[RMDB]
RNA sequence: GGGAACGACUCGAGUAGAGUCGAAAAUUUGUUAACAUUUGGUAAAUGUUACAACCUUGAUAAUGAAAUAAUAGACAUGUACAUGUUUUGAAAUGUAAAUUUUGGAUUCUUCUUGGAUAGGACAUUACCUCCUAGUCUUAUUCGUAAGACUAGGAGGAAAAGAAACAACAACAACAAC
Reactivity to DMS in 0.01 (KOAc 150mM, MgCl2 10mM, bicine 150mM(pH8.5), 24C), signal-to-noise 4, nucleotides 027 to 126: u010u000u000g000u010u010a010a010c000a030u000u000u010g010g010u010a130a070a010u000g000u000u000a020c020a050a080c080c010u000u000g020a230u020a040a050u010g000a100a060a060u000a060a090u010a070g000a040c050a020u000g000u010a050c080a020u000g010u010u000u010u000g000a040a080a040u000g010u000a030a080a080u000u000u000u000g010g010a080u010u000c100u000u000c030u000u000g000g000a110u000a070g000g010a100c100a080u000u010a120
Reactivity to 2A3 in 0.01 (KOAc 150mM, MgCl2 10mM, bicine 150mM(pH8.5), 24C), signal-to-noise 4, nucleotides 027 to 126: u020u000u070g000u000u040a030a000c010a020u020u000u060g050g030u130a030a050a010u020g000u010u010a010c000a010a080c020c000u040u060g050a040u060a200a050u140g040a080a040a030u110a030a060u030a090g040a040c020a010u030g020u070a030c030a080u010g120u050u150u100u100g080a110a120a020u060g020u100a030a100a170u080u090u050u050g070g020a010u040u040c010u040u000c000u030u020g030g000a030u030a080g050g000a000c010a040u090u120a050